Record summary:
Structure probing data (2A3 and DMS) for a 177-nucleotide construct.
[RMDB]
RNA sequence: GGGAACGACUCGAGUAGAGUCGAAAAGAUAUGGAUCGCUCGACGAAGCAAGCUACCCACCGAAAUCGGAAACGAUUUCGAGGCUUGCAGAGAGCAUCCUAAGUCAAAACCUCGGUUCGCCGAGGAACACAUGGCUAAACUUCGGUUUAGCCAUGUGAAAAGAAACAACAACAACAAC
Reactivity to 2A3 in 0.01 (KOAc 150mM, MgCl2 10mM, bicine 150mM(pH8.5), 24C), signal-to-noise 2, nucleotides 027 to 126: g010a040u220a090u300g030g010a010u030c190g000c000u040c030g300a300c040g030a150a020g010c000a020a000g000c000u060a050c000c000c090a010c020c000g000a000a020a000u010c000g010g050a070a040a070c000g020a000u000u030u000c000g000a000g010g030c000u010u010g000c000a010g000a000g020a000g020c010a000u000c000c000u000a170a020g130u120c120a000a060a060a240c000c010u020c010g050g000u060u070c290g000c050c010g000a020g000g000a000a020
Reactivity to DMS in 0.01 (KOAc 150mM, MgCl2 10mM, bicine 150mM(pH8.5), 24C), signal-to-noise 3, nucleotides 027 to 126: g000a120u010a180u010g000g000a010u010c230g030c000u000c000g010a240c210g010a130a120g010c010a000a000g020c000u000a080c020c000c020a300c110c000g000a000a010a000u010c000g010g000a060a050a110c020g010a000u000u000u000c010g010a080g010g000c000u000u000g000c000a010g020a030g000a010g010c010a030u000c000c000u000a030a090g010u000c160a060a090a080a110c020c000u000c010g010g000u000u020c180g000c000c000g000a000g000g000a010a070
Annotation: The 2A3 profile rests on 3,799 reads. The RNA was probed in 150 mM KOAc, 10 mM MgCl2 and 150 mM bicine (pH 8.5) at 24 C.